[RMDB]
RNA sequence: GGGAACGACUCGAGUAGAGUCGAAAACGUGGGCGACCUGCGCCGGAAUGCCCAGGCGCGCGGCCAGCGCCCGCACCGCGUUGGCCAGCCCGGCGGGGUUCAGGCCACCGGCGUUGGUGACGAUGCGACUUAUACCCGCAUUCGUGCGGGUAUAAGUAAAAGAAACAACAACAACAAC
Reactivity to 2A3 in 0.01 (KOAc 150mM, MgCl2 10mM, bicine 150mM(pH8.5), 24C), signal-to-noise 1, nucleotides 027 to 126: c020g000u030g000g030g070c030g000a060c040c030u070g000c000g040c010c000g040g010a130a070u140g020c040c040c020a020g130g040c050g010c040g000c060g010g000c000c030a010g020c000g020c010c020c010g100c040a020c040c050g010c020g000u010u040g010g000c000c060a020g000c010c030c010g090g000c060g020g100g010g030u060u260c150a110g070g110c050c090a000c010c000g010g010c030g020u010u100g060g000u020g020a040c000g020a020u040g000c000g020
Reactivity to DMS in 0.01 (KOAc 150mM, MgCl2 10mM, bicine 150mM(pH8.5), 24C), signal-to-noise 2, nucleotides 027 to 126: c070g040u000g010g000g010c050g010a140c050c030u010g010c040g010c000c000g040g020a110a120u010g010c010c020c040a130g010g020c020g050c230g000c100g010g000c020c010a080g010c020g000c050c060c020g000c100a050c110c110g000c000g000u000u000g000g010c020c000a100g010c020c020c040g020g010c050g010g010g000g030u000u000c100a090g010g000c070c040a120c010c000g020g000c040g040u010u000g000g010u000g000a100c060g020a080u020g000c030g000

This 177-nucleotide RNA was probed chemically with 2A3 and DMS.
High 2A3 reactivity points to a flexible backbone, as in loops and unpaired stretches.
Conditions: 150 mM KOAc, 10 mM MgCl2 and 150 mM bicine (pH 8.5), 24 C.
For DMS, 2,458 sequencing reads were counted.
Values cover nucleotides 27 to 126.
For 2A3 the reverse transcriptase was SuperScript II with manganese.
The 2A3 profile rests on 1,236 reads.